[RMDB]
RNA sequence: GGGAACGACUCGAGUAGAGUCGAAAAUACCAGUCGCGUGCUGACUCUCACGCCCACCCGCACGGCUGCUCCGAGAGAGGAGAGCUCUCUGCCGCUAGUCGAGCGGACAACCAGAGUGACUCUCCUGCCCUAUUUUCUACGGAGAGCCGGCGGUGGAGAUGUGUUCACUGUUCGCAGUGAACACAUCAAAAGAAACAACAACAACAAC
Reactivity to 2A3 in 0.01 (KOAc 150mM, MgCl2 10mM, bicine 150mM(pH8.5), 24C), signal-to-noise 3, nucleotides 027 to 156: u130a030c040c000a030g080u060c050g020c020g000u030g010c070u060g070a150c070u040c030u020c110a000c010g000c020c000c000a030c020c050c060g020c050a300c130g000g020c030u300g070c000u140c010c010g010a010g000a000g000a000g040g000a000g000a000g000c000u000c000u000c000u020g010c000c010g010c030u060a100g190u300c100g160a020g000c000g000g020a020c040a050a050c070c010a000g000a000g080u020g120a300c000u000c000u020c000c010u010g020c010c020c000u100a260u170u110u030u030c020u040a130c000g000g000a000g010a000g000c000c000g000g010c000g000g000u000g000g000a030
Reactivity to DMS in 0.01 (KOAc 150mM, MgCl2 10mM, bicine 150mM(pH8.5), 24C), signal-to-noise 1, nucleotides 027 to 156: u010a090c000c020a200g000u000c020g060c010g070u010g000c040u000g000a150c030u000c030u010c010a130c170g040c000c020c030a130c080c010c080g150c040a140c030g000g030c000u000g030c030u020c050c030g050a250g040a000g020a090g000g010a140g000a130g000c030u000c020u000c010u000g010c030c010g000c000u000a130g040u040c200g000a220g000c010g010g010a050c040a080a130c300c000a090g030a070g020u010g030a090c000u000c020u000c000c000u020g010c020c060c050u000a130u000u000u000u010c070u000a300c000g000g030a080g000a130g050c000c020g010g010c050g000g000u000g010g000a220